Structure probing data (DMS) for a 177-nucleotide construct.

RNA sequence: GGGAACGACUCGAGUAGAGUCGAAAAAGUGUAGAAAUCAACUCUUGUCAGAAUUUCAAGAGAAUUAAUAUUUUGGAAAAUGUGCUAAGGUAAAGAGUUAGAAGAUUAGUGAAGCGCAAUGAAUGAAUGAAAUCUAAACCUUCGGGUUUAGAUUUCAAAAAGAAACAACAACAACAAC
Reactivity to DMS in 0.01 (KOAc 150mM, MgCl2 10mM, bicine 150mM(pH8.5), 24C), signal-to-noise 1, nucleotides 027 to 126: a080g000u000g000u000a070g000a090a060a070u010c080a140a100c000u000c000u000u040g000u020c070a260g020a090a220u000u000u000c010a020a010g000a090g000a090a070u040u050a080a100u010a100u000u020u010u000g000g000a050a020a180a030u060g050u020g050c070u020a130a170g010g030u010a050a010a010g020a030g000u000u040a080g010a070a080g000a020u000u000a030g020u010g010a200a030g010c100g000c130a040a020u000g000a100a130u030g010a170a070
The data come from the RNA Mapping Database (RMDB), library RFM100. Conditions: 150 mM KOAc, 10 mM MgCl2 and 150 mM bicine (pH 8.5), 24 C.